Structure probing data (2A3 and DMS) for a 177-nucleotide construct. Values cover nucleotides 27 to 126. The reactions ran in a buffer of 150 mM KOAc, 10 mM MgCl2 and 150 mM bicine (pH 8.5), at 24 C.
RNA sequence: GGGAACGACUCGAGUAGAGUCGAAAAUUAUAUAGCGUGUGCAAGACGCUGAACUUGCCAUGAUCUGGAACUUUAGUGCUGAGGUCCGAGUUCCAGAUCUUCAUUUCGGACCUCAGCACUAAUAUAAGGUUCUAGAUAGAUUCGUCUAUCUAGAACCAAAAGAAACAACAACAACAAC
Reactivity to 2A3 in 0.01 (KOAc 150mM, MgCl2 10mM, bicine 150mM(pH8.5), 24C), signal-to-noise 2, nucleotides 027 to 126: u160u040a090u030a040u100a160g050c010g000u030g060u080g010c030a020a010g030a020c040g020c300u060g020a110a060c000u020u010g010c000c020a020u030g060a140u040c020u040g030g020a010a030c020u050u070u030a030g000u010g000c000u020g010a000g000g000u000c000c000g020a010g020u000u040c000c020a000g010a010u010c000u020u030c000a030u000u100u020c000g000g000a000c000c000u010c000a000g010c000a010c000u010a010a000u010a000u000a030a040
Reactivity to DMS in 0.01 (KOAc 150mM, MgCl2 10mM, bicine 150mM(pH8.5), 24C), signal-to-noise 3, nucleotides 027 to 126: u020u000a100u000a170u010a070g000c010g060u000g000u010g010c040a030a030g020a070c060g010c180u010g000a060a060c010u000u000g010c000c030a020u000g010a120u010c050u000g020g010a090a130c220u000u000u000a000g010u000g010c000u010g000a010g000g000u000c010c000g010a030g010u000u000c030c030a060g000a030u000c030u000u000c030a070u000u010u010c000g000g010a030c000c000u000c000a010g010c000a010c000u000a000a010u000a070u000a090a130